[RMDB]
RNA sequence: GGGAACGACUCGAGUAGAGUCGAAAAGUCAUGCCUUCGGGCAUGACAGGUACCGAGAGGUACCAAAUAGCGUACAGCAGACUCCGACUGUACGCUAAGUAAGUGUGUGUUCAAUAGGGUCCAAUUGAACACACACUCCGUUGGACCCAGAGUGUGAAUGGUAUUAUAUAUUCGUAUAUAAUACCAUAAAAGAAACAACAACAACAAC
Reactivity to 2A3 in 0.01 (KOAc 150mM, MgCl2 10mM, bicine 150mM(pH8.5), 24C), signal-to-noise 5, nucleotides 027 to 156: g000u000c000a000u000g010c000c010u040u100c250g060g000g000c000a000u000g000a010c000a010g000g000u000a000c010c020g020a030g000a020g070g000u000a020c000c000a030a090a000u060a000g000c010g000u000a000c000a000g020c020a030g100a210c070u060c090c070g180a180c020u000g000u000a000c000g000c000u000a050a000g100u080a030a040g000u000g000u010g000u000g000u000u000c020a030a030u040a160g070g040g020u030c010c000a030a050u010u000g000a000a000c000a000c000a000c000a000c010u010c000c010g080u080u060g040g020a050c000c020c020a030g050a030g100u150g010u070g080a090
Reactivity to DMS in 0.01 (KOAc 150mM, MgCl2 10mM, bicine 150mM(pH8.5), 24C), signal-to-noise 2, nucleotides 027 to 156: g000u000c000a010u000g020c010c020u000u000c300g050g020g060c010a000u010g000a010c010a000g000g000u000a020c000c000g010a300g010a300g020g010u000a020c000c010a040a050a140u000a000g010c000g020u000a000c000a020g000c020a110g000a170c100u000c050c000g030a020c010u000g000u000a000c000g010c000u010a000a060g030u010a040a000g040u000g040u020g010u000g000u000u000c010a030a040u000a060g030g020g030u000c030c050a150a210u010u000g010a030a010c000a040c000a000c020a000c010u000c010c060g000u000u010g000g000a120c060c020c030a260g000a150g010u020g050u000g000a160
Description:
Chemical mapping of a 207-nucleotide RNA with 2A3 and DMS. For 2A3, 4,935 sequencing reads were counted. Values are in units of 0.01, from 0 to 300, in steps of 10. 2A3 adducts were read by reverse transcription with SuperScript II with manganese.